[RMDB]
RNA sequence: GGGAACGACUCGAGUAGAGUCGAAAACAUGCAGAUUAUGAACCAGCAGCAGAAGUUGGCAUGCAGUACAUCAGCACUGCAUUAGGAGCUGAUAAGACACAGCAGAUACUCAAAAGCUCUGGCAGUGUCUAAGGGUGUACUUCGGUACACCCUUAGAAAAAGAAACAACAACAACAAC
Reactivity to 2A3 in 0.01 (KOAc 150mM, MgCl2 10mM, bicine 150mM(pH8.5), 24C), signal-to-noise 1, nucleotides 027 to 126: c010a000u090g000c040a020g050a210u090u190a140u300g040a070a090c000c030a020g000c020a010g030c040a010g040a290a020g090u130u050g000g030c050a030u070g040c020a020g060u050a050c040a050u070c040a000g020c000a020c020u030g040c030a050u010u120a050g000g000a020g030c000u000g040a030u050a110a090g060a010c050a000c030a100g030c020a000g060a070u040a060c020u040c100a040a080a010a070g020c000u000c000u010g010g080c040a000g040u020g020
Reactivity to DMS in 0.01 (KOAc 150mM, MgCl2 10mM, bicine 150mM(pH8.5), 24C), signal-to-noise 3, nucleotides 027 to 126: c110a090u000g000c040a070g020a090u000u010a110u000g010a090a100c080c020a040g000c070a080g020c090a060g000a090a070g010u010u000g020g010c050a060u000g010c000a060g010u000a070c110a080u020c110a100g000c020a000c000u000g000c030a080u010u020a100g000g000a030g020c000u010g000a100u020a070a110g010a110c190a050c000a080g000c090a080g000a090u000a040c040u000c090a040a050a180a050g010c040u000c000u000g000g000c050a020g020u000g000
This 177-nucleotide RNA was probed chemically with 2A3 and DMS. The DMS profile rests on 2,135 reads. The 2A3 profile rests on 991 reads. Source: RMDB library OK2TRN, as collected in RNAgym. For DMS the reverse transcriptase was MarathonRT.